The data come from the RNA Mapping Database (RMDB), libraries RFM100 and RFMREP. This 177-nucleotide RNA was probed chemically with DMS and 2A3. For DMS the reverse transcriptase was MarathonRT. 2A3 adducts were read by reverse transcription with SuperScript II with manganese.

RNA sequence: GGGAACGACUCGAGUAGAGUCGAAAAGGGAAGGCGUAGGGAAACCGACAUGGCCGCAGCAUUGCGAGGGCCGCCGUGUUCAAGCGCGGGGAGUCAAUCGGACACGACCCGAAACCGGAUGAUCUAGACGCAUCGACAUAUUCGUAUGUCGAUGCGUAAAAGAAACAACAACAACAAC
Reactivity to DMS in 0.01 (KOAc 150mM, MgCl2 10mM, bicine 150mM(pH8.5), 24C), signal-to-noise 2, nucleotides 027 to 126: g000g010g000a140a120g000g000c030g000u000a150g000g020g050a090a050a120c020c050g000a000c170a100u030g040g010c030c010g000c000a210g000c100a120u010u000g020c080g030a160g040g000g000c010c020g000c000c020g080u000g010u000u030c230a090a140g040c060g030c000g010g000g000g010a150g020u000c070a050a180u020c010g030g000a140c140a130c150g000a090c050c020c000g020a030a130a050c070c050g000g010a100u000g000a070u020c040u000a090g000
Reactivity to 2A3 in 0.01 (KOAc 150mM, MgCl2 10mM, bicine 150mM(pH8.5), 24C), signal-to-noise 1, nucleotides 027 to 126: g220g030g010a180a060g030g010c030g010u060a030g040g000g030a080a020a000c030c000g000a010c000a100u110g010g000c000c020g000c030a000g010c010a070u100u230g000c000g000a150g000g010g000c000c010g010c040c000g000u010g040u000u190c140a090a120g000c000g010c060g000g000g000g000a050g020u080c010a040a090u030c000g000g040a010c060a010c120g150a110c000c040c000g010a030a000a000c000c000g000g020a080u060g000a010u080c050u060a000g040